Source: RMDB library OK2TST, as collected in RNAgym. Structure probing data (DMS) for a 177-nucleotide construct.
RNA sequence: GGGAACGACUCGAGUAGAGUCGAAAACACGAAAGGCAAUCCGGGCAUCCCACCAGGCGGCGGCGCCACGCCAGGCGCCGGGCCGUCGCCAGGCGGCGCACCGGGCGGCAACGCCGCAGGUGGGGCCGCCAUUACGCGUCUUCGGACGCGUAAUGGCAAAAGAAACAACAACAACAAC
Reactivity to DMS in 0.01 (KOAc 150mM, MgCl2 10mM, bicine 150mM(pH8.5), 24C), signal-to-noise 1, nucleotides 027 to 126: c080a100c080g000a060a080a050g000g010c070a110a080u000c100c050g030g000g020c050a140u020c020c000c010a040c040c000a140g020g000c020g000g000c010g020g020c300g040c010c000a040c060g000c010c030a030g020g000c010g030c040c150g000g000g010c030c080g000u000c100g020c140c200a040g030g040c060g000g030c020g000c040a070c030c120g010g020g010c020g010g010c030a050a270c040g010c010c000g000c010a050g010g020u010g030g070g000g020c110c040
The reactions ran in a buffer of 150 mM KOAc, 10 mM MgCl2 and 150 mM bicine (pH 8.5), at 24 C.